[RMDB]
RNA sequence: GGGAACGACUCGAGUAGAGUCGAAAAAUAUCGGAAGACGUGGCGGGUUGGGACACGAAGAUCUCGAAAGGAUUACUCACCCUGGAGUCCCACAUGUUCACUAAACUAGCGGAGGAUGAAGAAAUGGCGAAGUUUCUACGUUCGCGUAGAAACUUCGAAAAGAAACAACAACAACAAC
Reactivity to DMS in 0.01 (KOAc 150mM, MgCl2 10mM, bicine 150mM(pH8.5), 24C), signal-to-noise 2, nucleotides 027 to 126: a130u060a030u020c020g000g000a060a030g050a070c110g020u010g010g000c000g020g110g000u030u000g000g000g000a040c150a050c160g030a040a000g000a050u000c050u000c060g000a040a160a170g000g010a020u000u000a100c060u020c040a120c060c060c020u000g000g050a170g020u000c010c000c010a000c080a040u020g000u000u020c000a040c160u020a000a050a120c070u040a130g000c010g000g030a150g000g010a170u080g020a100a080g000a020a030a040u000g000g000
Reactivity to 2A3 in 0.01 (KOAc 150mM, MgCl2 10mM, bicine 150mM(pH8.5), 24C), signal-to-noise 2, nucleotides 027 to 126: a010u290a210u200c200g120g110a070a050g090a130c050g000u010g000g060c090g000g040g070u000u030g000g020g000a000c000a000c060g100a110a040g010a070u020c010u000c030g040a130a020a060g070g000a050u000u220a170c000u000c070a110c000c000c000u080g060g030a090g080u040c000c080c000a010c000a030u160g020u130u120c030a010c020u060a000a120a000c000u050a070g070c050g050g010a040g000g010a010u000g030a080a020g020a050a020a010u090g040g000